This 207-nucleotide RNA was probed chemically with 2A3. As a SHAPE reagent, 2A3 marks flexible, mostly unpaired nucleotides at the ribose 2'-OH. Conditions: 150 mM KOAc, 10 mM MgCl2 and 150 mM bicine (pH 8.5), 24 C. It was measured as part of the RMDB library M2RFPK. For 2A3, 591 sequencing reads were counted.

RNA sequence: GGGAACGACUCGAGUAGAGUCGAAAAACAAACGCCAACGAUGAGCGUUUCGCUGUAGCCGCUUAAGGCAACAGCCGGGGCCGCCUGAGCCCUGUUACCAAAGACGGCUGGCGGGGGCUUCGGCUCCUAUAGCUGGCUUGCUUCGGCAAGCCAGCAACACUGAGGAUAUGUUCGCAUAUCCUCAGUGAAAAGAAACAACAACAACAAC
Reactivity to 2A3 in 0.01 (KOAc 150mM, MgCl2 10mM, bicine 150mM(pH8.5), 24C), signal-to-noise 1, nucleotides 027 to 156: a000c020a000a020a000c000g000c000c010a110a030c200g280a290u290g050a050g030c000g010u000u040u020c020g000c000u000g010u040a060g000c010c000g060c270u200u250a160a070g020g000c030a020a010c010a000g000c020c000g000g010g000g040c020c100g000c000c030u030g000a000g000c000c000c000u030g060u010u110a020c020c010a000a000a030g020a020c020g000g030c010u010g110g150c120g000g000g010g000g000c020u020u030c140g090g020c010u000c000c000u170a180u120a000g000c010u000g000g000c040u000u050g020c020u060u060c200g090g060c030a020a020g040c020c020a000g010c020a000a010